Annotation
An RNA of 207 nucleotides, treated with DMS and 2A3 and read out base by base. DMS adducts were read by reverse transcription with MarathonRT. For 2A3, 2,578 sequencing reads were counted. The DMS profile rests on 5,444 reads.
[RMDB]
RNA sequence: GGGAACGACUCGAGUAGAGUCGAAAAAGUGUUGCCUCACAUUAAGGAUGAUCUAGUGAAGUGCGCGGAGGGGACGGUACACCCUAGCGAGUGGAUGGUGGUCAAGUAUCAGAGCUUUUUUAAUUUUAGUAACUGUAGUGAUCUCAACAUGUUGCAGACGUGCUAAUAAUUUCGAUUAUUAGCACGUAAAAGAAACAACAACAACAAC
Reactivity to DMS in 0.01 (KOAc 150mM, MgCl2 10mM, bicine 150mM(pH8.5), 24C), signal-to-noise 2, nucleotides 027 to 156: a070g010u000g020u000u000g020c010c010u000c040a090c050a160u000u000a090a110g010g000a130u010g000a110u010c060u000a150g020u010g020a080a080g020u000g010c060g050c040g020g010a120g020g010g020g020a060c070g030g010u010a050c050a090c040c010c010u000a110g020c050g010a100g020u000g010g000a100u010g000g010u000g020g000u000c040a050a080g000u010a070u000c050a110g020a300g000c030u010u010u000u000u000u010a050a090u010u020u000u000a080g020u010a050a050c040u000g010u000a070g020u000g000a070u000c030u020c010a060a050c080a100u000g000u000u000g000c020a130g010
Reactivity to 2A3 in 0.01 (KOAc 150mM, MgCl2 10mM, bicine 150mM(pH8.5), 24C), signal-to-noise 4, nucleotides 027 to 156: a000g080u050g030u080u090g030c000c010u070c030a050c020a040u140u160a080a040g040g030a050u120g020a030u060c070u110a030g040u020g090a080a020g030u020g070c050g000c040g030g020a040g020g020g000g030a030c050g020g000u040a030c020a030c030c010c000u010a020g050c010g060a020g010u070g070g000a030u030g010g020u000g020g020u010c020a000a030g030u040a050u080c040a010g020a020g040c020u070u080u060u050u050u250a080a100u120u140u050u160a080g030u070a070a080c020u030g000u030a010g080u060g100a050u060c050u020c030a020a120c040a070u130g030u030u010g040c040a030g030